RNA sequence: GGGAACGACUCGAGUAGAGUCGAAAACUACAUCUACGGAUGUAGAACUUCGCGUACGCGCGAAGAACCAGGCACUUCGGUGCCUGGACCUGUAUGCUUCGGCAUACAGGACCAAUUCUACGGAAUUGGACCGAUGACGUUCGCGUCAUCGGAGUGCCUACGUUCGCGUAGGCACAGGAGAGUAGAUGAUUCGCGUUAAGUGUGUGUGAAUGGGAUGUCGUCACACAACGAAGCGAGAGCGCGGUGAAUCAUUGCAUCCGCUCCAUAGCCACAUGUUCGCAUGUGGCAAAAGAAACAACAACAACAAC
Reactivity to DMS in 0.01 (KOAc 150mM, MgCl2 10mM, bicine 150mM(pH8.5), 24C), signal-to-noise 5, nucleotides 027 to 266: c000u000a000c000a000u010c000u000a130c170g020g000a010u000g010u010a000g010a130a200c020u000u000c000g020c000g020u010a070c180g050c010g010c010g010a000a010g010a230a250c000c000a000g000g010c000a000c000u000u020c160g030g030u000g020c000c000u000g010g010a030c010c010u000g010u000a000u000g000c000u000u020c200g030g010c000a000u000a000c000a000g000g000a180c010c000a000a010u000u000c000u000a110c220g040g000a020a010u000u000g000g010a300c010c010g000a010u000g010a020c000g020u010u020c190g030c020g010u000c000a000u000c000g000g000a100g010u000g000c010c000u000a010c000g010u010u030c210g030c010g020u000a000g000g000c000a000c000a050g010g000a020g000a030g000u010a300g010a010u000g000a020u000u000c010g010c010g000u020u010a040a050g000u000g010u000g000u000g000u000g000a040a060u000g000g000g000a010u000g000u010c210g010u010c000a010c010a000c010a010a050c050g000a070a060g030c030g000a190g000a160g000c000g000c050g000g010u000g000a040a020u000c020a010u000u000g000c000a000u000c000c000g000c000u000c000c000a170u010a150
Reactivity to 2A3 in 0.01 (KOAc 150mM, MgCl2 10mM, bicine 150mM(pH8.5), 24C), signal-to-noise 7, nucleotides 027 to 266: c000u000a000c000a000u010c010u030a030c300g130g000a010u000g000u010a010g010a040a040c010u010u000c000g000c000g020u030a060c280g000c000g000c010g130a000a000g000a010a030c000c000a010g000g000c010a000c010u060u100c270g120g000u000g000c000c000u000g000g000a010c000c000u000g000u000a000u000g000c010u040u080c230g150g000c000a000u000a000c000a000g000g000a000c000c000a000a010u000u000c010u030a070c300g110g010a000a010u010u000g010g020a010c010c010g000a000u000g000a000c010g010u040u070c280g060c000g110u010c010a000u000c000g000g000a040g000u000g000c000c000u000a010c010g020u020u050c240g020c000g100u000a000g000g000c000a000c000a000g000g000a000g000a000g000u010a000g000a010u010g000a000u000u000c010g000c010g000u010u060a020a010g010u000g000u000g000u000g000u000g020a020a010u010g000g000g010a010u020g040u100c090g000u000c030a000c000a000c000a010a020c020g010a020a000g000c010g020a040g020a020g060c010g000c000g000g040u000g000a000a000u000c000a010u000u010g000c000a000u000c000c000g000c000u010c020c020a110u170a100

An RNA of 307 nucleotides, treated with DMS and 2A3 and read out base by base. Source: RMDB library POS240, as collected in RNAgym. The RNA was probed in 150 mM KOAc, 10 mM MgCl2 and 150 mM bicine (pH 8.5) at 24 C. For DMS, 22,031 sequencing reads were counted. Reactivities are given for positions 27 through 266. For 2A3 the reverse transcriptase was SuperScript II with manganese.